An RNA of 207 nucleotides, treated with 2A3 and DMS and read out base by base. For 2A3, 2,383 sequencing reads were counted. The reactions ran in a buffer of 150 mM KOAc, 10 mM MgCl2 and 150 mM bicine (pH 8.5), at 24 C. For 2A3 the reverse transcriptase was SuperScript II with manganese.
[RMDB]
RNA sequence: GGGAACGACUCGAGUAGAGUCGAAAAACGAGGCCGUUCCUACUACGGUAGGCACGGCCUCGAAUUACGUUCAUCUACUUAAUCGUAGACGCAUCAAUACAUCAUUCAUGGAACGGGGGAUGGUGAAACUAGAAUCAAACGUUCGCGUUUGAUUCAACAUCAUAGACCACUUCGGUGGUCUAUGAUGAAAAGAAACAACAACAACAAC
Reactivity to 2A3 in 0.01 (KOAc 150mM, MgCl2 10mM, bicine 150mM(pH8.5), 24C), signal-to-noise 2, nucleotides 027 to 156: a000c000g000a000g020g000c010c000g000u000u010c070c000u000a010c000u000a000c120g130g000u000a000g000g000c010a010c000g010g020c000c000u010c000g000a000a000u010u020a000c000g000u000u020c010a010u010c010u000a010c010u090u240a080a040u240c120g020u020a000g010a030c000g010c000a070u120c050a060a120u110a180c000a010u020c000a000u020u020c000a010u040g050g000a020a020c010g010g000g000g000g000a000u010g000g020u020g030a090a000a000c100u100a100g000a000a000u010c010a010a000a000c010g030u080u060c240g020c000g140u020u040u000g000a000u000u000c000a000a000
Reactivity to DMS in 0.01 (KOAc 150mM, MgCl2 10mM, bicine 150mM(pH8.5), 24C), signal-to-noise 2, nucleotides 027 to 156: a190c020g000a050g010g060c000c000g050u010u000c000c020u040a050c050u010a080c210g080g000u000a000g020g000c100a030c000g030g000c000c020u000c000g000a020a040u000u010a090c030g010u000u000c000a240u010c000u000a000c010u020u000a130a090u000c190g020u000a010g010a030c030g030c080a110u000c070a090a100u000a100c100a020u000c010a030u000u000c000a140u000g000g020a100a090c070g010g000g020g010g030a080u000g020g020u010g000a130a070a170c110u000a080g000a030a000u010c000a010a000a000c010g030u010u010c300g020c040g010u010u000u000g000a000u000u020c000a070a170